[RMDB]
RNA sequence: GGGAACGACUCGAGUAGAGUCGAAAAGGGGUCCAGACAACAGCGGAUAAAUCUUCAUCGAUCAUACACUGAAGCCUCCACGGUGUAUGGGAGAAGAUGUCCGACAUGUCUGGACGGAGGCACCCAAAAUCUUAACAAAGUUCGCUUUGUUAAGAAACUCUAUUUUACUCUUCGGAGUAAAAUAGAGAAAAGAAACAACAACAACAAC
Reactivity to 2A3 in 0.01 (KOAc 150mM, MgCl2 10mM, bicine 150mM(pH8.5), 24C), signal-to-noise 5, nucleotides 027 to 156: g070g010g080g010u000c010c000a000g020a000c030a240a060c070a130g300c030g000g000a020u090a180a300a080u050c020u040u020c030a170u300c040g000a010u000c010a000u000a000c000a000c000u030g040a140a020g010c000c000u000c000c000a010c000g020g000u000g000u000a000u000g000g000g000a040g010a010a000g000a000u000g020u000c000c000g040a150c040a070u130g000u000c000u000g010g000a000c000g000g000a000g000g000c010a020c010c000c000a030a150a030a100u000c000u010u010a000a000c000a000a000a020g010u050u070c140g080c130u020u000u010g000u000u000a000a000g000a030a000a000
Reactivity to DMS in 0.01 (KOAc 150mM, MgCl2 10mM, bicine 150mM(pH8.5), 24C), signal-to-noise 1, nucleotides 027 to 156: g000g070g000g010u000c000c000a040g010a030c020a040a040c160a070g020c010g000g000a030u000a060a100a100u000c010u020u000c000a190u000c150g020a210u010c010a010u000a030c000a000c000u020g000a020a130g010c030c000u010c000c010a300c110g000g000u010g020u000a010u000g000g020g040a030g000a020a010g040a010u010g000u000c000c030g010a040c020a170u000g000u000c000u010g010g020a010c000g010g030a020g110g060c020a070c000c000c020a030a090a080a100u000c000u000u000a000a000c010a010a000a030g000u000u010c300g050c000u010u000u000g020u010u000a010a010g000a030a040a140